[RMDB]
RNA sequence: GGGAACGACUCGAGUAGAGUCGAAAAUGCUGAGCGACUUUAAGACCUGGCUGAAAGCCAAGCUCAUGCCACAACUGCCUGGGAUUCCCUUUGUGUCCUGCCAGCGCGGGUAUAGGGGGGUCUGGCGACUCAUAAUCGGUUUCGACCGAUUAUGAGUAAAAGAAACAACAACAACAAC
Reactivity to 2A3 in 0.01 (KOAc 150mM, MgCl2 10mM, bicine 150mM(pH8.5), 24C), signal-to-noise 9, nucleotides 027 to 126: u150g010c020u020g010a010g000c030g130a120c090u130u170u230a170a050g050a140c020c040u030g030g010c010u110g200a230a060a020g010c010c010a010a020g000c000u010c020a020u230g020c010c030a100c020a140a140c070u130g000c000c010u100g090g040g020a040u200u300c000c000c000u030u040u020g030u010g070u090c000c010u020g020c020c040a180g020c090g000c000g120g000g010u040a040u080a050g010g000g000g000g000g010u000c010u020g010g000c010g020
Reactivity to DMS in 0.01 (KOAc 150mM, MgCl2 10mM, bicine 150mM(pH8.5), 24C), signal-to-noise 4, nucleotides 027 to 126: u030g010c030u000g010a020g020c000g000a090c120u020u040u040a150a100g010a130c140c050u010g000g000c010u010g010a030a110a080g030c020c040a020a180g000c000u010c020a010u070g020c020c300a110c140a050a040c120u050g000c000c020u020g000g010g000a030u010u010c010c000c010u000u010u000g010u000g000u030c000c000u000g030c000c060a150g010c250g020c030g000g010g010u000a030u020a060g020g000g000g000g020g020u000c000u000g000g000c020g020
Overview:
Chemical mapping of a 177-nucleotide RNA with 2A3 and DMS. Conditions: 150 mM KOAc, 10 mM MgCl2 and 150 mM bicine (pH 8.5), 24 C. For 2A3 the reverse transcriptase was SuperScript II with manganese. The DMS profile rests on 7,921 reads.